[RMDB]
RNA sequence: GGGAACGACUCGAGUAGAGUCGAAAACACGUGCAGCUGGCAGGAAGCUGAAAGCUGUUGGUUGGGAGAGGCCUUAAUUUUUACACUUGCCCCUGCCUGGAAUGCCCUAUCACAGGGGAGGGUCCCAUACUGGAACUGGAUCAACAGCUGUCGCCUGCAUCCAAAUCAGUUUCGACUGAUUUGGAUGAAAAGAAACAACAACAACAAC
Reactivity to DMS in 0.01 (KOAc 150mM, MgCl2 10mM, bicine 150mM(pH8.5), 24C), signal-to-noise 2, nucleotides 027 to 156: c050a070c070g030u010g050c020a050g030c010u020g010g030c040a060g020g000a090a110g020c060u010g010a080a070a110g030c010u000g010u000u000g010g000u010u000g030g010g000a140g020a170g010g000c010c060u020u000a030a070u000u000u000u000u000a110c060a090c060u000u000g010c000c020c010c000u040g030c020c050u000g060g020a100a120u000g010c100c040c030u020a140u010c040a080c040a090g010g010g010g010a090g000g000g000u000c010c010c020a130u010a100c090u000g000g020a070a070c070u000g030g010a030u000c010a030a030c020a030g000c000u010g000u000c020g000c030c010u000g000
Reactivity to 2A3 in 0.01 (KOAc 150mM, MgCl2 10mM, bicine 150mM(pH8.5), 24C), signal-to-noise 3, nucleotides 027 to 156: c100a000c050g050u120g020c020a030g010c020u000g010g030c000a020g040g010a040a010g000c020u070g040a150a030a000g000c020u020g020u020u000g000g000u050u050g060g000g010a150g000a080g030g000c010c010u110u060a120a190u040u110u070u060u190a070c140a020c040u030u190g020c000c000c000c000u020g010c030c010u020g010g070a130a030u120g050c000c000c000u080a080u170c020a040c020a020g020g020g000g000a040g020g000g020u060c040c020c020a070u130a100c080u110g020g060a060a070c020u080g040g000a030u000c000a000a010c000a010g000c010u020g040u010c070g030c010c000u020g000